[RMDB]
RNA sequence: GGGAACGACUCGAGUAGAGUCGAAAAGAUAGGGGGUUCGCCCCCUAUCAAAGGUGCAAUGUACUUUCUGCACCAAAGACGGAAAAACCGACAAAGUACAAAAAACGAUGGCGUUCGCGCCAUCGAACAUACUUGGAGGGUUCGCCCUCCAAGUAUGAAAAGAAACAACAACAACAAC
Reactivity to DMS in 0.01 (KOAc 150mM, MgCl2 10mM, bicine 150mM(pH8.5), 24C), signal-to-noise 2, nucleotides 027 to 126: g000a020u000a000g020g040g000g020g040u000u010c280g040c000c000c010c000c000u010a000u000c000a040a070a080g050g030u000g000c000a100a080u000g000u010a010c000u010u010u000c060u030g030c000a010c020c000a050a070a190g000a170c110g000g000a100a140a040a150a160c020c050g000a040c120a010a040a030g000u010a000c010a030a120a070a090a090a110c010g000a010u000g050g000c010g010u000u010c240g020c000g000c010c010a000u000c000g010a040a080
Reactivity to 2A3 in 0.01 (KOAc 150mM, MgCl2 10mM, bicine 150mM(pH8.5), 24C), signal-to-noise 2, nucleotides 027 to 126: g000a000u000a010g000g040g000g000g020u020u010c030g020c020c010c000c010c000u000a010u000c000a000a010a000g010g010u000g030c010a010a150u200g010u020a020c020u010u080u060c020u030g020c010a000c010c000a100a050a000g040a010c060g020g040a230a050a030a040a050c040c040g070a030c120a020a050a000g030u060a000c000a000a250a030a020a000a000c030g010a000u000g000g010c030g000u040u050c280g040c020g000c090c000a000u020c000g010a000a010